[RMDB]
RNA sequence: GGGAACGACUCGAGUAGAGUCGAAAAUGUAACUUGGUACAUAUACACACGCAAGGAUGGUGCUUUUGUAGACCGCUAUGACGGCUACUAUACUCAAGGGCGUAAUGCAAAUGAUUUUGUGGCUCGUAGUCAGAUGGAAAAAGACUUUCUUGCUAUGAGUAGAGAUACCGUUCGCGGUAUCUCUACUAAAAGAAACAACAACAACAAC
Reactivity to DMS in 0.01 (KOAc 150mM, MgCl2 10mM, bicine 150mM(pH8.5), 24C), signal-to-noise 1, nucleotides 027 to 156: u020g010u010a110a080c080u010u020g010g020u010a060c030a090u000a090u000a170c060a070c010a080c230g050c000a050a050g020g000a110u020g030g000u010g030c040u000u000u020u010g020u010a130g010a070c020c050g060c010u000a110u020g020a100c030g010g000c000u010a060c020u000a070u000a070c080u010c010a050a070g000g010g060c020g000u010a050a100u000g020c020a090a100a080u010g000a160u020u000u000u000g050u000g020g000c030u000c030g030u000a050g000u000c030a090g050a150u000g030g000a040a060a050a050a090g020a090c070u000u000u000c010u000u000g020c030u000a100u010g000
Reactivity to 2A3 in 0.01 (KOAc 150mM, MgCl2 10mM, bicine 150mM(pH8.5), 24C), signal-to-noise 2, nucleotides 027 to 156: u130g000u040a050a150c020u040u040g080g040u070a050c010a000u110a010u080a070c070a000c010a000c150g010c040a010a020g040g020a040u080g010g090u140g090c010u030u050u040u080g030u010a070g050a300c020c000g000c120u110a090u300g080a060c020g000g000c000u000a010c010u020a020u030a070c070u090c080a060a120g050g040g000c000g080u080a130a040u150g010c020a040a020a050u080g160a110u070u060u050u030g030u010g040g010c000u000c070g030u020a010g000u030c020a020g040a120u100g060g000a030a000a030a000a000g010a000c000u020u040u030c020u000u030g000c030u040a090u100g060